[RMDB]
RNA sequence: GGGAACGACUCGAGUAGAGUCGAAAACGACGAGCACACUCGUGUCCGGAGAGUGGAUCGCUUCCCGCAGCCAGCGGAUCAGCGCGGUAGUUUUUCCCGACCCCAUUGGCGCGCGGACCACAGUCACGGUCUUCCUGUGGUUCGCCACAGGAAGACCAAAAGAAACAACAACAACAAC
Reactivity to DMS in 0.01 (KOAc 150mM, MgCl2 10mM, bicine 150mM(pH8.5), 24C), signal-to-noise 1, nucleotides 027 to 126: c050g020a020c090g000a210g000c130a260c000a070c070u000c000g000u080g030u000c000c070g000g000a240g000a000g030u000g000g000a070u000c050g010c020u000u020c020c010c030g000c070a140g000c010c040a040g010c060g010g010a110u060c070a100g060c020g000c000g030g010u010a040g020u000u000u000u000u000c000c000c010g000a130c090c000c000c010a040u050u010g050g000c030g010c090g070c000g010g000a010c000c020a110c080a080g010u000c090a070c230
Reactivity to 2A3 in 0.01 (KOAc 150mM, MgCl2 10mM, bicine 150mM(pH8.5), 24C), signal-to-noise 3, nucleotides 027 to 126: c060g120a010c030g020a020g030c110a010c020a020c130u020c000g050u030g110u120c010c040g050g020a080g010a010g060u060g010g030a080u060c030g000c050u050u020c000c000c010g000c000a020g040c000c020a020g000c010g020g060a100u090c040a020g030c060g000c070g100g010u060a060g010u080u100u000u060u040c030c010c000g030a120c000c000c000c010a060u010u080g010g000c010g010c000g000c000g030g010a000c010c010a060c050a090g060u100c040a010c120

Annotation:
An RNA of 177 nucleotides, treated with DMS and 2A3 and read out base by base. 2A3 adducts were read by reverse transcription with SuperScript II with manganese. The DMS profile rests on 1,424 reads. It was measured as part of the RMDB library OK1LIB.